[RMDB]
RNA sequence: GGGAACGACUCGAGUAGAGUCGAAAACGGUAGCGCAGUCCCUCGGCUUCGAUAGCCUCUGCGGCCCCGGUGGCGCGAUCCACCACGGUAGCCACGCCGACAACCUCACCACCCACGUCUUGGACGGCUACAGCCGGAGUUUCGACUCCGGCUGUAGAAAAGAAACAACAACAACAAC
Reactivity to DMS in 0.01 (KOAc 150mM, MgCl2 10mM, bicine 150mM(pH8.5), 24C), signal-to-noise 2, nucleotides 027 to 126: c050g000g000u020a090g020c060g000c090a140g000u000c040c000c030u000c110g010g030c010u040u020c080g000a090u050a110g000c020c000u010c070u000g000c010g010g000c010c050c060c010g060g010u010g000g000c000g000c070g000a070u010c030c010a080c070c030a070c070g030g000u040a090g000c030c010a080c070g000c020c010g000a120c130a060a100c060c030u000c000a060c010c070a050c030c020c010a050c060g010u020c000u030u000g030g010a020c070g000g000
Reactivity to 2A3 in 0.01 (KOAc 150mM, MgCl2 10mM, bicine 150mM(pH8.5), 24C), signal-to-noise 4, nucleotides 027 to 126: c050g020g020u060a030g060c020g010c050a000g030u080c010c000c000u040c030g030g000c000u050u030c080g110a120u120a070g010c010c000u040c030u050g040c000g010g050c000c000c000c000g020g020u030g000g020c070g000c040g110a050u030c000c000a020c000c000a030c050g030g030u030a020g020c020c010a020c060g020c010c000g040a050c030a050a060c000c000u030c010a040c000c000a030c000c020c000a050c020g040u010c050u070u120g050g020a030c020g030g010
About this RNA: The data come from the RNA Mapping Database (RMDB), library OK1LIB. This 177-nucleotide RNA was probed chemically with DMS and 2A3. Conditions: 150 mM KOAc, 10 mM MgCl2 and 150 mM bicine (pH 8.5), 24 C. 2A3 adducts were read by reverse transcription with SuperScript II with manganese. High 2A3 reactivity points to a flexible backbone, as in loops and unpaired stretches.